RNA sequence: GGGAACGACUCGAGUAGAGUCGAAAAGAUAUGGAUCCCGGAGCUUUUGACGCGGAUAUAUCGGAAACGAUAUAAUCGCGAUAAGCUCCUGGAUCCUAAGUCAAAGUAAUGGGUUCGCCCAUUACAACCAAUCAUCUAGGUUCGCCUAGAUGAUUGGAAAAGAAACAACAACAACAAC
Reactivity to DMS in 0.01 (KOAc 150mM, MgCl2 10mM, bicine 150mM(pH8.5), 24C), signal-to-noise 2, nucleotides 027 to 126: g000a010u000a070u000g010g000a020u010c000c000c170g000g010a010g020c000u010u000u000u020g020a230c060g020c000g000g020a070u000a000u000a000u000c000g000g020a030a010a070c000g020a000u000a020u000a000a010u000c000g030c000g010a070u010a000a010g000c000u000c000c000u000g010g000a000u000c000c000u000a000a080g000u000c010a130a170a180g020u000a010a010u000g000g010g000u000u000c300g030c010c000c000a010u000u010a000c000a180a300
Reactivity to 2A3 in 0.01 (KOAc 150mM, MgCl2 10mM, bicine 150mM(pH8.5), 24C), signal-to-noise 3, nucleotides 027 to 126: g010a000u040a010u080g000g010a010u000c030c010c040g000g000a000g010c090u260u300u300u300g300a200c060g000c000g010g000a000u010a000u000a000u000c000g000g000a040a000a010c000g010a000u010a010u000a020a070u050c000g000c020g070a090u100a100a000g000c000u020c000c000u000g010g000a000u000c000c000u000a010a010g000u000c020a170a130a050g000u000a010a010u010g000g000g080u040u110c300g130c010c000c040a000u000u010a000c000a000a010
Record summary: Chemical mapping of a 177-nucleotide RNA with DMS and 2A3. For DMS the reverse transcriptase was MarathonRT. It was measured as part of the RMDB library TTRDES. The RNA was probed in 150 mM KOAc, 10 mM MgCl2 and 150 mM bicine (pH 8.5) at 24 C. For 2A3 the reverse transcriptase was SuperScript II with manganese.